[RMDB]
RNA sequence: GGGAACGACUCGAGUAGAGUCGAAAAAUAUGUCAGUCCUCCUUGUAAGAGGAUCUAGGACGUAGGGAGGGUGGGUCAGAGCGCCGAUGCCCUAGAUCAGGCGCGCGAGAAGUUAUGGGAAGGACUAGACUGUUCCUUCGUUCGCGGAGGGACGGUCAAAAGAAACAACAACAACAAC
Reactivity to 2A3 in 0.01 (KOAc 150mM, MgCl2 10mM, bicine 150mM(pH8.5), 24C), signal-to-noise 1, nucleotides 027 to 126: a000u030a110u010g080u070c020a000g000u000c000c000u080c010c040u000u300g300u300a160a020g010a050g030g030a010u120c010u010a000g010g080a000c040g020u020a000g000g000g010a110g060g040g070u170g060g000g000u040c020a020g000a020g060c010g050c020c000g040a020u110g030c030c000c030u030a060g000a150u120c120a140g000g000c010g000c050g000c000g000a060g090a050a080g090u130u160a040u130g000g010g090a070a050g110g000a140c010u040a050
Structure probing data (2A3) for a 177-nucleotide construct. For 2A3 the reverse transcriptase was SuperScript II with manganese. Source: RMDB library OK1LIB, as collected in RNAgym.